[RMDB]
Chemical mapping of a 207-nucleotide RNA with DMS and 2A3. The RNA was probed in 150 mM KOAc, 10 mM MgCl2 and 150 mM bicine (pH 8.5) at 24 C. It was measured as part of the RMDB library OK3TST. For 2A3, 1,683 sequencing reads were counted. Values are in units of 0.01, from 0 to 300, in steps of 10.

RNA sequence: GGGAACGACUCGAGUAGAGUCGAAAAAGUUCUAGUCCUCACCUAAGAUCAGACUGACAAGGCCCUCAAAGUAAGAGCACUGGGUUGGGCUUUGUGGUGGGGAUUAGUGUCUCAUUUUUAGUCCCAAAUUAAAAACGAGAUUUUGGGCUGUACAUCAUCACCUACUCAUAUUCGUAUGAGUAGGUGAAAAAGAAACAACAACAACAAC
Reactivity to DMS in 0.01 (KOAc 150mM, MgCl2 10mM, bicine 150mM(pH8.5), 24C), signal-to-noise 2, nucleotides 027 to 156: a130g020u010u000c010u000a040g020u020c000c010u000c010a030c000c010u000a070a090g020a110u000c150a150g000a140c050u010g000a120c050a070a070g010g000c000c010c000u000c060a090a090a130g020u000a030a100g010a120g000c080a060c040u000g010g030g020u000u000g010g020g060c010u000u000u000g020u010g030g050u000g020g030g010g000a030u000u000a010g020u000g010u000c020u010c010a060u020u000u000u000u000a000g000u000c040c030c070a090a040a080u010u010a030a010a010a030a050c020g010a040g000a240u000u000u000u000g010g010g030c100u000g020u000a080c160a150u000c040a290
Reactivity to 2A3 in 0.01 (KOAc 150mM, MgCl2 10mM, bicine 150mM(pH8.5), 24C), signal-to-noise 3, nucleotides 027 to 156: a000g110u120u040c000u010a000g000u000c010c010u010c000a000c000c000u070a090a010g030a140u120c100a060g180a230c050u140g000a010c010a010a000g010g000c000c010c010u040c050a170a200a030g040u080a090a040g070a050g240c090a000c020u010g040g040g090u100u050g000g030g000c000u000u000u030g000u020g000g000u000g000g010g010g000a000u000u000a000g000u000g020u010c000u020c030a050u100u090u050u050u220a020g100u190c000c020c000a000a010a000u050u040a020a070a090a030a040c180g040a110g010a190u020u010u000u070g000g020g000c030u090g060u140a100c030a130u120c010a020